An RNA of 177 nucleotides, treated with 2A3 and read out base by base. For 2A3, 599 sequencing reads were counted. Source: RMDB library OK1LIB, as collected in RNAgym.
[RMDB]
RNA sequence: GGGAACGACUCGAGUAGAGUCGAAAAUUUUUUGGAUUUUGAACAACCCAUAGCCGAACUGACCAACAAAAUCGAUGAGCUGCGUUUCGUCCAAGACGAGUCUGCCGUCGAUAUUUCGGACGAAAUACCACUGCCGGAUAUUCGUAUCCGGCAGUGGAAAAGAAACAACAACAACAAC
Reactivity to 2A3 in 0.01 (KOAc 150mM, MgCl2 10mM, bicine 150mM(pH8.5), 24C), signal-to-noise 2, nucleotides 027 to 126: u130u140u040u010u000u070g170g040a090u070u020u060u130g130a050a030c010a010a070c050c000c040a070u160a060g210c020c000g000a070a050c060u050g090a070c020c130a000a150c100a010a040a000a180u020c090g040a020u050g040a060g080c080u030g010c060g090u170u000u000c000g010u010c060c060a010a140g050a000c000g000a000g060u110c060u060g080c000c090g000u030c030g000a010u000a160u170u120u010c050g000g030a040c120g010a060a040a000u130a090